[RMDB]
RNA sequence: GGGAACGACUCGAGUAGAGUCGAAAAAGUUAGGUUCGCUAUGGUGCAACUCUUUAAGGCAAUAACGAACUAAUUCUAAGCAAGUAAUGGAGAAAUGCCAGGAUCACUAUCUAGCCAUAAUAGUGCUGUAAGUGACUUAGAUUCGUCUAAGUCACAACCUAAUGGGCAGCUUCGGCUGCCCAUUAGGAAAAGAAACAACAACAACAAC
Reactivity to 2A3 in 0.01 (KOAc 150mM, MgCl2 10mM, bicine 150mM(pH8.5), 24C), signal-to-noise 1, nucleotides 027 to 156: a000g070u020u020a030g120g000u030u030c000g000c040u040a100u110g000g190u090g000c030a100a180c060u040c000u130u270u210a080a010g000g000c030a020a100u010a080a000c040g010a000a020c090u020a030a060u040u010c010u080a050a050g000c050a110a000g030u200a040a170u120g010g010a010g000a030a130a000u030g100c050c000a000g070g010a110u070c000a040c030u010a010u050c000u030a030g010c000c000a030u050a080a040u090a040g090u060g030c030u040g000u030a130a020g010u000g000a000c000u000u000a000g000a000u020u000c140g020u060c040u000a030a000g000u000c000a000c000a000a000